The record gives the reactivity of an RNA of 177 nucleotides to DMS and 2A3. For DMS, 30,874 sequencing reads were counted. The reactions ran in a buffer of 150 mM KOAc, 10 mM MgCl2 and 150 mM bicine (pH 8.5), at 24 C. For 2A3, 8,676 sequencing reads were counted.
RNA sequence: GGGAACGACUCGAGUAGAGUCGAAAAAUGGUGGCUAUCCUGAUUGUCGGCAUGGUCAUGGAUUUAACGCCGACGGUAUUAAUUCUUACCCCGGUAUUAAUGCCUUUAGUUAAAGAGGCAGGAAUCGAAUUAUGGAUAGGUUCGCCUAUCCAUAAUUAAAAGAAACAACAACAACAAC
Reactivity to DMS in 0.01 (KOAc 150mM, MgCl2 10mM, bicine 150mM(pH8.5), 24C), signal-to-noise 8, nucleotides 027 to 126: a080u020g010g010u010g000g000c040u010a050u000c030c010u010g010a090u020u010g020u000c030g010g020c040a110u010g010g010u010c020a110u020g010g010a080u010u010u010a120a120c120g010c030c020g010a050c080g000g020u000a030u010u010a040a060u000u010c030u000u020a190c030c010c010c020g010g010u010a030u010u000a060a030u000g000c000c000u010u000u010a110g020u030u030a070a100a070g010a050g000g010c010a040g000g010a070a070u020c100g000
Reactivity to 2A3 in 0.01 (KOAc 150mM, MgCl2 10mM, bicine 150mM(pH8.5), 24C), signal-to-noise 7, nucleotides 027 to 126: a000u160g060g010u050g020g000c030u060a060u080c020c020u050g050a130u050u140g060u050c020g010g020c050a050u090g060g000u070c050a110u110g080g030a050u090u110u110a110a040c060g000c010c010g010a010c000g000g000u020a020u010u060a050a060u080u010c030u040u090a130c000c000c000c000g000g000u040a030u080u030a060a040u030g010c000c000u020u060u060a060g020u020u110a140a110a020g080a040g030g000c020a010g050g000a030a080u160c070g010